The record gives the reactivity of an RNA of 177 nucleotides to 2A3 and DMS. For 2A3 the reverse transcriptase was SuperScript II with manganese. For DMS, 2,592 sequencing reads were counted. The 2A3 profile rests on 2,216 reads. Values are in units of 0.01, from 0 to 300, in steps of 10.
[RMDB]
RNA sequence: GGGAACGACUCGAGUAGAGUCGAAAAGCGUCACGGUCAACGGCGUACUGGCCCGCACUGUGGAGGAUGCGGCGCUGGUGCUGGACGCCGCGUCCGGCAACGUCGAGGGCGACCGCCACCAGCCACCUACAUCCAGGAGUUUCGACUCCUGGAUGUAAAAAGAAACAACAACAACAAC
Reactivity to 2A3 in 0.01 (KOAc 150mM, MgCl2 10mM, bicine 150mM(pH8.5), 24C), signal-to-noise 2, nucleotides 027 to 126: g020c030g020u080c100a010c080g040g010u050c060a030a080c060g000g000c020g020u060a140c100u100g070g020c000c020c000g050c020a070c020u090g000u160g060g150a100g020g010a040u020g010c010g010g000c070g010c040u000g010g060u140g010c040u050g020g060a020c000g010c050c020g080c030g010u000c000c000g020g000c040a060a050c010g020u060c040g010a110g050g020g020c040g020a020c060c020g020c000c020a020c070c000a030g030c020c000a070c000c010
Reactivity to DMS in 0.01 (KOAc 150mM, MgCl2 10mM, bicine 150mM(pH8.5), 24C), signal-to-noise 3, nucleotides 027 to 126: g020c050g000u000c030a050c050g030g000u010c040a120a160c100g000g000c020g010u000a090c210u010g020g010c020c020c020g000c110a030c040u000g010u010g010g010a210g000g010a110u000g020c040g000g020c070g010c040u010g020g030u010g040c050u000g000g020a170c020g020c050c040g010c020g030u000c010c020g000g000c130a120a060c060g010u010c080g000a090g010g010g010c110g010a050c040c040g010c010c010a080c030c020a070g020c010c030a130c070c050